[RMDB]
An RNA of 177 nucleotides, treated with DMS and read out base by base. Reactivities are given for positions 27 through 126. The RNA was probed in 150 mM KOAc, 10 mM MgCl2 and 150 mM bicine (pH 8.5) at 24 C. It was measured as part of the RMDB library TTRDES. Values are in units of 0.01, from 0 to 300, in steps of 10.
RNA sequence: GGGAACGACUCGAGUAGAGUCGAAAAAAAGAUAUGGACCAUACUACCCACCAUCCGGCGGCUGAUGACCGUUUAUCGGAAACGAUAAACGCAAGGCCCGAGGAUGAGGUAUGGUCCUAAGUCAAAAGUGCAAGAAAGAGUUCGCUCUUUCUUGCACAAAAGAAACAACAACAACAAC
Reactivity to DMS in 0.01 (KOAc 150mM, MgCl2 10mM, bicine 150mM(pH8.5), 24C), signal-to-noise 1, nucleotides 027 to 126: a070a050a030g000a060u000a170u110g020g000a000c000c000a000u000a000c060u000a170c110c040c040a300c090c000a000u000c020c000g020g170c300g060g000c000u000g020a220u000g000a070c300c000g000u000u000u000a000u020c000g000g000a000a060a250c000g000a000u000a000a000a020c020g000c070a070a150g020g000c020c000c020g010a300g020g000a000u020g000a060g040g060u000a020u000g020g000u020c000c000u060a020a110g000u000c070a110a040a040a110